[RMDB]
This 207-nucleotide RNA was probed chemically with 2A3. Conditions: 150 mM KOAc, 10 mM MgCl2 and 150 mM bicine (pH 8.5), 24 C. High 2A3 reactivity points to a flexible backbone, as in loops and unpaired stretches. It was measured as part of the RMDB library OK3TST. 2A3 adducts were read by reverse transcription with SuperScript II with manganese.
RNA sequence: GGGAACGACUCGAGUAGAGUCGAAAAAUAUCUUUAAGUGACUUCCUUAAAUUAGUGUUCAAGGACUGCUUGUUAGUGGUUUUGUUUGGAACGAGGUCUGAUUAUCCUUAACUGGUUAAGGAAGCCAUGAGGUUAUCAGUACUGUUGUGUACAGUGCCCUACAAUGCUGGUUCGCCAGCAUUGUAGGAAAAGAAACAACAACAACAAC
Reactivity to 2A3 in 0.01 (KOAc 150mM, MgCl2 10mM, bicine 150mM(pH8.5), 24C), signal-to-noise 2, nucleotides 027 to 156: a010u020a070u030c030u060u150u110a160a070g000u010g080a070c000u010u070c020c000u050u000a100a040a080u110u040a030g110u060g020u160u050c010a000a040g030g000a060c000u000g000c000u010u120g080u290u270a050g010u110g060g030u130u020u070u130g160u060u070u130g190g000a010a040c050g020a050g020g020u000c020u070g050a120u000u260a050u140c020c000u010u040a060a060c020u010g000g000u000u030a030a000g110g000a110a000g000c010c000a000u020g020a020g030g040u030u060a060u240c050a000g050u080a000c020u000g020u050u070g070u040g020u100a060c020a180g000u050g050c000